[RMDB]
RNA sequence: GGGAACGACUCGAGUAGAGUCGAAAAGGAUCAACAGUAUUCACACGCUGUUUCCGCAGCAGGUGAUUGAGCGGCUGGAAAGCGAUGCCGUGCUGCGCUACGGCAUUGAAGAUGUGGUGACGAAUCAUCCACCCGUACGAUUCGUCGUACGGGUGGAAAAAGAAACAACAACAACAAC
Reactivity to 2A3 in 0.01 (KOAc 150mM, MgCl2 10mM, bicine 150mM(pH8.5), 24C), signal-to-noise 1, nucleotides 027 to 126: g050g020a090u080c060a010a070c000a010g040u050a090u060u140c010a030c040a010c060g030c000u000g050u040u070u040c050c070g010c020a000g030c000a000g000g150u070g080a210u110u060g050a110g060c020g000g000c020u040g000g060a040a100a040g080c000g000a010u020g030c000c000g010u020g010c000u120g000c050g000c000u060a010c000g020g000c040a010u020u030g040a070a040g050a080u150g030u060g050g100u040g000a020c030g090a070a050u130c000a010
Reactivity to DMS in 0.01 (KOAc 150mM, MgCl2 10mM, bicine 150mM(pH8.5), 24C), signal-to-noise 2, nucleotides 027 to 126: g030g010a050u000c110a060a030c050a060g000u010a090u010u010c070a040c130a070c080g010c000u000g000u020u000u000c120c080g000c000a030g000c010a100g020g010u000g010a110u000u000g010a110g000c040g000g000c020u000g010g000a060a070a070g010c030g020a040u000g000c000c000g010u020g030c050u000g010c100g050c050u010a020c010g000g010c000a030u010u010g000a050a080g010a110u020g010u000g000g030u010g010a090c130g000a080a080u020c150a200